This 177-nucleotide RNA was probed chemically with DMS and 2A3. For DMS, 800 sequencing reads were counted. The 2A3 profile rests on 1,053 reads.
[RMDB]
RNA sequence: GGGAACGACUCGAGUAGAGUCGAAAACAGGUAGCACCAGCCACCAUUGACUUUGAUAUAGCUGAUAUAUCCACUCCACACACGAUUGGGCUCCGACGGCUUAAACUGCCUUUUCAGUAAGUCUGGCGGGAUCUGUAUAGUUCGCUAUACAGAUCCCAAAAGAAACAACAACAACAAC
Reactivity to DMS in 0.01 (KOAc 150mM, MgCl2 10mM, bicine 150mM(pH8.5), 24C), signal-to-noise 1, nucleotides 027 to 126: c070a150g010g020u000a060g020c030a050c040c120a070g000c030c030a060c060c060a050u020u000g010a060c100u000u000u020g000a070u000a020u010a060g030c130u010g010a160u000a020u000a010u040c010c130a070c050u000c030c120a100c040a050c160a060c040g000a090u000u010g030g010g000c030u000c050c030g020a080c100g000g000c020u000u000a000a090a070c090u000g020c140c000u000u010u020u000c060a100g030u000a100a120g000u000c000u000g000g010c300
Reactivity to 2A3 in 0.01 (KOAc 150mM, MgCl2 10mM, bicine 150mM(pH8.5), 24C), signal-to-noise 1, nucleotides 027 to 126: c000a020g040g040u050a000g010c000a010c110c040a050g030c000c030a020c020c010a030u010u080g010a070c060u260u100u180g040a020u110a000u040a110g080c090u100g160a000u010a010u010a050u120c000c000a010c020u040c020c000a040c020a010c000a000c000g060a010u030u120g070g010g000c030u070c030c030g080a110c050g030g020c000u060u070a000a130a020c020u020g020c010c030u010u000u040u110c030a040g020u060a100a000g030u000c030u050g030g000c040
Annotation: The data come from the RNA Mapping Database (RMDB), library OK2TRN.